[RMDB]
The record gives the reactivity of an RNA of 177 nucleotides to DMS and 2A3.
DMS adducts were read by reverse transcription with MarathonRT.
It was measured as part of the RMDB library M2PK50.

RNA sequence: GGGAACGACUCGAGUAGAGUCGAAAACUACAUAAAUUCGUUUAUGUAGCAUCGGGGACGCGCAGACUCCCCGUCAGACGGCUCUAGCCUUCCAAGCUGUGCACUCAACAGCUUUCGAGCUGUUGAACAUGUCAUCACUAUUCGUAGUGAUGACAUGAAAAGAAACAACAACAACAAC
Reactivity to DMS in 0.01 (KOAc 150mM, MgCl2 10mM, bicine 150mM(pH8.5), 24C), signal-to-noise 9, nucleotides 027 to 126: c000u000a000c000a000u000a000a010a030u000u010c190g010u000u000u000a000u000g000u000a010g010c110a090u010c010g010g000g000g000a050c130g000c020g000c030a020g000a090c050u000c000c000c000c000g010u000c110a020g010a060c080g000g010c000u010c210u000a140g010c010c010u000u000c020c250a020a020g020c010u000g000u000g010c030a290c220u000c010a010a010c000a000g010c000u000u000u020c150g000a010g020c000u000g010u000u000g000a020a180
Reactivity to 2A3 in 0.01 (KOAc 150mM, MgCl2 10mM, bicine 150mM(pH8.5), 24C), signal-to-noise 9, nucleotides 027 to 126: c000u010a000c000a010u020a010a020a020u080u080c140g050u050u010u000a010u010g000u000a010g020c030a090u180c010g000g000g000g000a010c050g010c000g000c030a010g030a200c010u000c000c000c010c000g000u010c000a010g000a020c020g020g000c020u060c130u270a070g010c010c000u020u010c030c060a010a000g000c010u000g000u020g010c010a030c050u030c000a000a000c000a000g000c000u040u050u110c200g090a010g000c000u010g020u000u000g000a010a020